RNA sequence: GGGAACGACUCGAGUAGAGUCGAAAACUGCCAUAAUUUUUGAUUACUUGGGCGUGGUCAGCGAAGUGGGCGUGGGGGCGUGUUCCUGUGCAGUAGUUGCCACAUUGCCCCCAAAGGCAACGGCAACCGGACGAUAAUAUUUCGAUAUUAUCGUCCGAAAAGAAACAACAACAACAAC
Reactivity to DMS in 0.01 (KOAc 150mM, MgCl2 10mM, bicine 150mM(pH8.5), 24C), signal-to-noise 6, nucleotides 027 to 126: c050u010g020c030c060a080u060a040a050u010u000u020u010u050g000a080u010u010a040c090u030u010g000g000g010c040g030u010g000g010u000c050a080g020c060g000a060a100g020u000g000g000g000c050g020u010g010g000g010g010g020c030g030u020g000u000u010c040c060u000g020u020g010c090a100g020u010a090g010u000u010g000c020c020a070c130a200u020u020g010c010c000c000c040c180a020a050a080g010g000c040a020a030c150g000g010c030a030a030c060
Reactivity to 2A3 in 0.01 (KOAc 150mM, MgCl2 10mM, bicine 150mM(pH8.5), 24C), signal-to-noise 9, nucleotides 027 to 126: c020u070g060c030c010a130u130a220a200u120u070u090u100u170g120a080u070u110a090c050u050u120g050g020g010c030g020u030g010g030u050c040a010g020c040g080a120a020g050u100g030g050g000c040g020u070g000g020g000g010g000c020g020u060g030u020u030c020c010u050g030u060g040c020a020g000u190a010g010u050u020g010c010c010a050c010a080u040u190g000c000c000c000c000c010a030a020a020g010g000c010a010a010c020g010g010c010a010a010c020